[RMDB]
RNA sequence: GGGAACGACUCGAGUAGAGUCGAAAAGGCAUCAUGUGUACAUUUUUCAACGAGCUAAUACAAAUUUUCGGGGAUCGUAAAGAGUUUGAAUAUUAUUUCCAAAAUAUAUGCCGAGUGUAUAUGCAGAAUCAACUGUUCGACGUAAAGUAUCCCGUCCACGUCUUGUAGACUUCGGUCUACAAGACGUAAAAGAAACAACAACAACAAC
Reactivity to DMS in 0.01 (KOAc 150mM, MgCl2 10mM, bicine 150mM(pH8.5), 24C), signal-to-noise 1, nucleotides 027 to 156: g040g020c010a090u000c110a040u030g010u020g030u000a080c030a110u010u010u000u000u000c090a060a160c030g010a200g070c040u000a040a110u000a300c070a070a150a080u000u000u010u000c050g080g000g000g010a020u030c040g010u000a040a010a210g020a160g010u000u000u010g010a050a070u000a010u000u000a130u020u010u000c010c000a100a050a040a090u000a040u040a110u010g030c000c070g010a010g020u030g020u000a060u000a010u000g040c110a040g070a050a040u010c040a040a040c120u000g000u010u000c010g020a070c040g040u000a050a070a110g010u000a060u000c000c020c030g050u020c120c090
Reactivity to 2A3 in 0.01 (KOAc 150mM, MgCl2 10mM, bicine 150mM(pH8.5), 24C), signal-to-noise 2, nucleotides 027 to 156: g010g040c030a060u070c090a100u220g050u030g060u120a060c060a190u140u110u010u040u060c030a100a110c080g020a030g050c000u080a100a030u080a200c040a100a130a030u060u050u010u080c040g080g000g030g000a020u080c040g020u040a070a180a030g070a050g040u040u100u150g050a040a010u080a030u130u160a030u000u070u070c000c000a020a040a140a000u110a000u010a020u070g010c040c020g000a060g000u060g030u010a040u000a030u180g000c020a010g030a070a070u040c020a030a100c000u030g000u020u030c040g010a010c020g050u070a040a040a080g050u030a080u110c020c000c000g000u010c040c050
Chemical mapping of a 207-nucleotide RNA with DMS and 2A3. For 2A3 the reverse transcriptase was SuperScript II with manganese. Source: RMDB library OK3TST, as collected in RNAgym. For DMS the reverse transcriptase was MarathonRT. The 2A3 profile rests on 784 reads.